[RMDB]
RNA sequence: GGGAACGACUCGAGUAGAGUCGAAAAGGAAUCUUGCACGCCCUCGCUCAAGCCUUCGUCACUCCAAACGUUUCGGCGAGAAGCAGGCCAUUAUCGCCGGCAUGGCGGCCGACGCGCUGGGCUGGCGGUUCAUCCCACAGUUCGCUGUGGGAUGAACAAAAGAAACAACAACAACAAC
Reactivity to DMS in 0.01 (KOAc 150mM, MgCl2 10mM, bicine 150mM(pH8.5), 24C), signal-to-noise 1, nucleotides 027 to 126: g040g030a180a030u000c050u000u000g010c040a080c060g010c000c000c040u000c070g000c000u010c150a180a150g000c020c010u020u000c020g000u000c060a040c060u030c080c090a080a110a080c160g040u000u000u000c060g010g010c000g030a080g000a110a140g010c080a080g030g020c080c080a030u000u000a130u010c110g010c000c000g010g020c110a080u000g010g000c070g050g000c090c070g000a100c200g000c050g000c050u000g000g000g010c030u010g010g000c030g010
Reactivity to 2A3 in 0.01 (KOAc 150mM, MgCl2 10mM, bicine 150mM(pH8.5), 24C), signal-to-noise 1, nucleotides 027 to 126: g050g000a080a070u060c020u090u230g000c030a020c040g040c000c080c000u000c010g010c010u070c060a010a040g000c000c020u120u060c020g030u010c030a050c100u030c040c050a140a100a150c100g020u040u060u130c050g020g020c010g010a020g010a070a000g080c070a040g080g080c000c050a170u220u200a120u160c030g030c000c030g000g010c040a070u130g090g010c000g020g070c020c010g060a010c050g000c000g000c050u030g060g000g000c000u000g000g020c040g040
Chemical mapping of a 177-nucleotide RNA with DMS and 2A3. The DMS profile rests on 960 reads. The 2A3 profile rests on 1,102 reads. The reactions ran in a buffer of 150 mM KOAc, 10 mM MgCl2 and 150 mM bicine (pH 8.5), at 24 C. It was measured as part of the RMDB library OK2TRN.